[RMDB]
RNA sequence: GGGAACGACUCGAGUAGAGUCGAAAAAACGUCAAAGCCAAUAAUAACUGGCAAAGAAAAACAAAACCUAGCUUUCGCUGCCUAAUAAGCAGUAGCAUAGCUGAUCCUCCGUGCAUCGCCCAUGUGCUACGGUAAGGGUCUCACUCUAAGUGGGCUACAACACAAAUACCUUCGGGUAUUUGUGUUGAAAAGAAACAACAACAACAAC
Reactivity to DMS in 0.01 (KOAc 150mM, MgCl2 10mM, bicine 150mM(pH8.5), 24C), signal-to-noise 1, nucleotides 027 to 156: a110a080c020g020u000c120a080a090a290g000c010c000a030a020u010a230a200u010a130a130c130u030g000g000c000a080a070a220g010a040a090a060a160a180c040a010a060a010a050c030c050u000a020g060c000u020u010u000c050g010c020u090g000c010c010u020a170a140u000a020a040g000c020a010g090u000a130g000c050a050u000a050g010c010u000g000a050u000c000c000u050c000c020g000u000g020c000a020u000c060g110c000c000c050a120u000g010u000g000c020u000a030c000g000g040u000a090a030g000g000g000u000c040u010c030a080c050u000c120u000a030a070g140u010g000g000g000c010u000a090
Reactivity to 2A3 in 0.01 (KOAc 150mM, MgCl2 10mM, bicine 150mM(pH8.5), 24C), signal-to-noise 2, nucleotides 027 to 156: a000a000c120g060u060c050a130a100a020g010c010c010a060a040u200a110a090u140a110a060c070u070g010g000c010a020a150a020g030a040a080a030a010a000c060a030a110a000a000c050c030u060a010g010c000u000u020u040c030g000c010u010g010c000c010u100a140a070u230a210a040g010c010a000g000u020a020g000c040a030u030a010g010c000u010g000a010u020c000c000u000c000c000g000u000g000c000a000u000c040g000c000c010c000a000u010g000u000g010c040u060a000c000g050g000u050a100a110g020g030g010u010c040u080c050a050c010u140c030u140a080a000g020u000g000g010g000c000u010a010
Chemical mapping of a 207-nucleotide RNA with DMS and 2A3. Values cover nucleotides 27 to 156. The reactions ran in a buffer of 150 mM KOAc, 10 mM MgCl2 and 150 mM bicine (pH 8.5), at 24 C. For DMS the reverse transcriptase was MarathonRT.